[RMDB]
RNA sequence: GGGAACGACUCGAGUAGAGUCGAAAAUAGCGUACCGAUCACAUGUGGAUCAUGCAGCACAUGUACGUACUCUAGACACUAGGUACAUACUGACGUACGAGCUAGGUACUCUGGAUCUCGAUCCGCGGAGAACGAAUUAGUUCGCUAAUUCGUUCUCAAAAGAAACAACAACAACAAC
Reactivity to 2A3 in 0.01 (KOAc 150mM, MgCl2 10mM, bicine 150mM(pH8.5), 24C), signal-to-noise 7, nucleotides 027 to 126: u080a000g000c010g000u000a010c010c030g020a060u060c030a020c020a050u060g040u100g090g050a100u100c050a100u250g080c060a010g030c000a000c010a030u050g000u040a020c080g000u010a010c050u020c000u220a040g080a180c110a090c250u030a010g040g040u030a020c020a030u090a040c070u090g090a050c060g030u040a010c020g030a010g060c020u040a060g040g000u030a020c000u010c010u030g070g020a070u030c030u010c060g050a080u040c020c020g050c090g100
Reactivity to DMS in 0.01 (KOAc 150mM, MgCl2 10mM, bicine 150mM(pH8.5), 24C), signal-to-noise 6, nucleotides 027 to 126: u000a050g010c090g010u000a010c020c020g000a060u000c090a180c040a040u020g010u000g010g000a050u000c040a110u010g010c060a090g040c040a030c020a030u000g010u000a090c170g000u000a000c000u010c000u000a020g010a160c190a140c070u000a020g000g020u000a020c010a180u000a040c040u010g020a180c280g000u000a020c030g000a070g020c030u000a080g010g000u000a040c010u000c030u000g000g000a130u010c030u000c090g000a090u000c040c030g010c280g000